[RMDB]
RNA sequence: GGGAACGACUCGAGUAGAGUCGAAAAGAGUGCCGCAAAGAACAUCCUCACCAGUGUCUGUGUAUGUGUGCCACAGGGUUUCUGGUAGCUGCGUUUUCUGUUCUGGGAAUCACUUCCAAAUGCCAUUCCAGAGUGGCUGGACUCCUUGCUUCCACAGUGAGAUAGGUCAAUUCGUUGACCUAUCUCAAAAAGAAACAACAACAACAAC
Reactivity to 2A3 in 0.01 (KOAc 150mM, MgCl2 10mM, bicine 150mM(pH8.5), 24C), signal-to-noise 4, nucleotides 027 to 156: g050a010g010u040g040c030c020g010c060a050a070a040g040a020a030c020a070u070c000c030u030c020a030c020c010a020g010u020g050u030c020u000g030u010g030u060a060u130g160u050g080u130g080c040c000a010c010a010g030g030g020u040u170u090c020u020g030g010u030a040g020c060u080g040c010g030u000u010u070u060c050u050g050u040u040c020u010g030g020g020a050a050u100c030a030c060u110u040c020c020a060a060a080u130g010c020c000a020u070u060c020c010a020g030a000g090u020g030g010c000u020g000g030a010c020u010c000c010u040u040g030c010u060u000c000c010a070c020a050g090
Reactivity to DMS in 0.01 (KOAc 150mM, MgCl2 10mM, bicine 150mM(pH8.5), 24C), signal-to-noise 3, nucleotides 027 to 156: g010a100g020u000g020c020c030g000c050a070a050a070g010a040a050c030a080u000c070c010u000c080a050c000c000a080g010u000g020u000c000u000g020u000g020u000a070u000g020u010g020u000g030c040c020a040c020a050g010g020g010u000u000u000c020u020g020g010u010a060g020c030u000g010c030g030u000u000u010u000c040u000g010u000u000c000u010g000g010g030a070a120u000c030a060c040u010u000c080c050a030a110a090u010g010c030c020a140u000u000c040c090a150g000a150g020u010g000g030c030u000g000g020a110c060u000c040c030u010u000g000c030u010u000c010c000a100c130a170g020
Overview:
This 207-nucleotide RNA was probed chemically with 2A3 and DMS. For DMS the reverse transcriptase was MarathonRT. The RNA was probed in 150 mM KOAc, 10 mM MgCl2 and 150 mM bicine (pH 8.5) at 24 C. It was measured as part of the RMDB library OK3TST. Values cover nucleotides 27 to 156. For DMS, 13,030 sequencing reads were counted.